[RMDB]
RNA sequence: GGGAACGACUCGAGUAGAGUCGAAAAUGUUCCGGAUUCGUCCGGAACAAAAUAAGGCACCGGUACUCGUCGAUACAAUGCCACGGAGAUGGACCGGGUGAAAAACCACUUAGUUCGCUAAGUGGAAGUUAGUGCUGCUAUUCGUAGCAGCACUAACAAAAGAAACAACAACAACAAC
Reactivity to DMS in 0.01 (KOAc 150mM, MgCl2 10mM, bicine 150mM(pH8.5), 24C), signal-to-noise 1, nucleotides 027 to 126: u010g020u000u010c000c010g000g000a040u000u010c140g040u000c000c000g010g020a000a000c000a000a020a040a060u010a080a110g020g010c040a060c010c020g000g000u000a050c040u010c000g000u010c020g000a200u030a070c180a120a090u010g010c080c090a110c050g000g000a210g000a030u000g000g010a040c020c010g000g010g030u000g000a030a020a070a170a090c000c000a000c000u000u000a030g000u000u000c200g030c010u000a010a000g000u000g000g000a010a030
Reactivity to 2A3 in 0.01 (KOAc 150mM, MgCl2 10mM, bicine 150mM(pH8.5), 24C), signal-to-noise 1, nucleotides 027 to 126: u070g000u000u000c000c010g000g000a020u000u030c120g040u000c050c020g000g000a000a000c010a000a000a000a010u070a000a040g160g020c020a060c050c000g000g020u070a060c020u020c090g120u040c010g030a030u060a200c090a170a150u190g070c130c000a040c030g080g020a120g000a040u050g000g030a020c000c000g030g000g000u050g040a110a080a000a020a030c000c000a010c000u000u010a000g040u030u050c260g000c080u010a000a000g000u000g000g050a000a000
Chemical mapping of a 177-nucleotide RNA with DMS and 2A3. Reactivities are given for positions 27 through 126. For 2A3, 1,588 sequencing reads were counted.